Source: RMDB library TTRDEL, as collected in RNAgym. The record gives the reactivity of an RNA of 177 nucleotides to 2A3 and DMS. The DMS profile rests on 4,660 reads. For 2A3, 6,546 sequencing reads were counted. The RNA was probed in 150 mM KOAc, 10 mM MgCl2 and 150 mM bicine (pH 8.5) at 24 C. High 2A3 reactivity points to a flexible backbone, as in loops and unpaired stretches.
RNA sequence: GGGAACGACUCGAGUAGAGUCGAAAAGAUAUGGAUAACGGGAGCGUAGAUUCGGAAACGAAUCGAAACGCAUCGAUCGUUCAUCCUAAGUCAAAUCUCUCGAUGAUCUUCGGAUCAUCGAGAGAAACUAAUUGUAUCCCUUCGGGGAUACAAUUAGAAAAGAAACAACAACAACAAC
Reactivity to 2A3 in 0.01 (KOAc 150mM, MgCl2 10mM, bicine 150mM(pH8.5), 24C), signal-to-noise 3, nucleotides 027 to 126: g010a010u050a010u090g000g000a000u010a040a010c000g020g000g010a040g000c010g000u020a050g000a020u000u030c020g030g000a080a040a010c000g010a010a050u000c000g010a040a010a010c020g020c010a130u300c030g050a080u050c000g000u030u050c070a020u030c000c000u020a110a010g050u020c030a000a060a240u020c000u000c000u000c020g000a000u010g000a000u000c030u090u150c300g100g010a010u010c000a000u000c000g000a010g000a000g000a000a000a000
Reactivity to DMS in 0.01 (KOAc 150mM, MgCl2 10mM, bicine 150mM(pH8.5), 24C), signal-to-noise 4, nucleotides 027 to 126: g010a020u000a230u000g000g000a020u000a060a020c020g000g010g000a030g020c000g020u000a240g000a010u000u000c010g010g000a030a050a110c010g000a020a010u000c000g010a060a110a050c010g020c030a180u000c180g010a050u000c010g000u000u010c200a010u000c000c000u000a020a130g000u000c020a110a130a160u000c010u000c010u000c000g000a020u000g010a000u000c000u010u010c210g030g000a000u010c000a000u000c000g010a000g000a000g000a010a030a130